[RMDB]
RNA sequence: GGGAACGACUCGAGUAGAGUCGAAAACUUGCUAUGCGUUCACUGGAAGAAGCCAGCUGUAAGUUUUUAAUAUUACGCUUAUUGGUACCGAAAUUGAUAACUCGCGGGCAUCGUAUAUUAUUGUUUUCUCAAUUUAUCCAGCAACUCGAUAUCCUUACGUGAUGAGUGAUUUCGAUCACUCAUCACGAAAAGAAACAACAACAACAAC
Reactivity to 2A3 in 0.01 (KOAc 150mM, MgCl2 10mM, bicine 150mM(pH8.5), 24C), signal-to-noise 1, nucleotides 027 to 156: c010u000u000g010c070u110a090u250g000c000g060u070u090c120a040c110u100g070g030a060a050g040a010a020g180c020c040a010g000c010u010g040u060a000a100g000u010u000u050u090u090a090a040u030a010u070u060a020c020g010c020u050u060a010u180u190g090g000u130a110c030c030g010a000a050a170u070u060g060a100u100a180a060c040u050c180g020c100g000g010g000c050a050u010c020g050u090a110u000a000u300u020a020u010u060g040u020u010u120u060c020u040c000a050a030u000u230u100a110u000c060c020a040g000c040a090a060c010u040c100g040a070u070a020u210c010c000u040u020a050